Source: RMDB library OK1LIB, as collected in RNAgym.
This 177-nucleotide RNA was probed chemically with DMS and 2A3.
2A3 adducts were read by reverse transcription with SuperScript II with manganese.
The DMS profile rests on 17,896 reads.
For DMS the reverse transcriptase was MarathonRT.
RNA sequence: GGGAACGACUCGAGUAGAGUCGAAAAUGGAAAGCAGUGUGAAGGCACUUAGGUGUUUCAUGAGUAAUCUCACAGCUAUGAGUGGCGAAAGGCAAGGUGGUGUGUGUGAUGACACCGAAUGCAUACAUCGAUUAUAGCAUUUCGAUGCUAUAAUCGAAAAAGAAACAACAACAACAAC
Reactivity to DMS in 0.01 (KOAc 150mM, MgCl2 10mM, bicine 150mM(pH8.5), 24C), signal-to-noise 6, nucleotides 027 to 126: u030g010g010a080a070a090g010c060a050g020u010g020u020g000a090a100g000g010c090a020c060u010u030a080g020g010u000g000u000u010u010c060a090u010g010a090g010u020a110a160u010c000u000c020a050c080a130g020c040u020a050u020g020a080g040u010g020g010c030g010a060a080a070g000g010c060a070a040g010g020u010g000g020u010g000u000g010u020g010u000g000a090u020g000a050c050a070c040c030g000a150a080u010g010c040a040u020a050c170a160
Reactivity to 2A3 in 0.01 (KOAc 150mM, MgCl2 10mM, bicine 150mM(pH8.5), 24C), signal-to-noise 9, nucleotides 027 to 126: u120g020g020a060a030a000g040c050a040g040u010g010u040g130a110a030g100g000c010a000c040u060u060a070g080g010u040g030u040u060u060c090a090u110g040a020g070u110a070a100u050c010u010c010a040c020a030g030c040u070a050u150g050a060g100u050g030g020c050g060a080a050a040g080g000c030a020a040g060g030u070g020g010u030g050u000g000u000g040u050g060a120u120g020a020c000a010c020c010g010a050a020u060g010c020a020u070a100c040a060